[RMDB]
RNA sequence: GGGAACGACUCGAGUAGAGUCGAAAAAUCGAUCCGCGCCGGCUACGACGGCGGCACGUGGGGCCGGGAAUACCUCGAUUUCUGGAUCAACCGCACGCCGAACGAUGCGAACAGCGACGCGAACCAGUCCAUUAAGUGCUUUCGAGCACUUAAUGGAAAAAGAAACAACAACAACAAC
Reactivity to DMS in 0.01 (KOAc 150mM, MgCl2 10mM, bicine 150mM(pH8.5), 24C), signal-to-noise 2, nucleotides 027 to 126: a090u000c070g020a050u000c030c000g010c020g030c000c010g020g000c050u000a080c020g010a140c050g000g000c010g030g010c070a050c080g010u000g000g030g010g020c010c000g000g010g020a040a010u010a140c130c040u000c110g000a180u000u000u000c000u000g010g030a300u000c100a040a210c030c000g000c040a140c040g000c050c000g010a100a050c130g010a090u040g000c050g010a080a060c160a030g030c000g000a010c020g000c040g000a040a070c010c060a150g000
Reactivity to 2A3 in 0.01 (KOAc 150mM, MgCl2 10mM, bicine 150mM(pH8.5), 24C), signal-to-noise 2, nucleotides 027 to 126: a000u070c050g000a050u010c010c030g000c000g010c020c000g110g010c030u070a070c050g060a020c030g050g000c000g010g010c090a020c100g010u020g000g040g020g000c000c010g000g020g040a010a000u090a160c040c070u060c120g060a040u060u000u010c010u050g090g020a140u100c040a080a110c010c000g050c030a040c050g030c030c020g060a170a070c050g050a080u200g170c030g040a140a030c000a030g020c010g050a020c020g040c010g010a020a080c010c010a020g140
Structure probing data (DMS and 2A3) for a 177-nucleotide construct. For 2A3 the reverse transcriptase was SuperScript II with manganese. The reactions ran in a buffer of 150 mM KOAc, 10 mM MgCl2 and 150 mM bicine (pH 8.5), at 24 C.